The record gives the reactivity of an RNA of 177 nucleotides to 2A3 and DMS.
RNA sequence: GGGAACGACUCGAGUAGAGUCGAAAAGUCUGACAGACUCAGACUCACACAGUCUGACUGACAGUCUCUGUCAGUGAGAGUGAGAGUCUCAGUGAGUGAGUGACACUGUCUCAGUCUCUCAGUCUGACGUUUUCGCACUCUUCGGAGUGCGAAAACGAAAAGAAACAACAACAACAAC
Reactivity to 2A3 in 0.01 (KOAc 150mM, MgCl2 10mM, bicine 150mM(pH8.5), 24C), signal-to-noise 1, nucleotides 027 to 126: g010u030c050u070g010a050c020a010g020a000c030u000c040a020g000a000c000u010c020a120c000a000c000a070g050u000c000u000g050a000c000u010g000a000c010a010g240u050c100u060c020u140g000u000c030a020g010u000g000a000g010a000g020u080g010a090g030a000g020u080c010u030c170a040g000u040g080a110g050u130g060a150g020u080g020a030c000a010c070u070g050u120c000u000c040a060g150u060c000u000c000u020c010a010g050u010c000u000g010a020
Reactivity to DMS in 0.01 (KOAc 150mM, MgCl2 10mM, bicine 150mM(pH8.5), 24C), signal-to-noise 1, nucleotides 027 to 126: g020u020c020u020g000a190c050a080g000a050c010u000c050a010g010a010c000u000c120a160c150a140c110a050g010u000c000u000g000a040c010u000g000a040c000a040g000u000c160u010c000u010g020u000c000a010g020u010g000a010g000a030g000u010g010a110g000a020g000u000c060u000c100a010g000u000g010a120g010u000g020a060g010u010g010a150c010a100c110u000g000u000c040u000c090a050g000u020c000u010c030u000c000a070g000u000c000u000g010a200
For 2A3 the reverse transcriptase was SuperScript II with manganese. For DMS the reverse transcriptase was MarathonRT. The data come from the RNA Mapping Database (RMDB), library OK2TRN.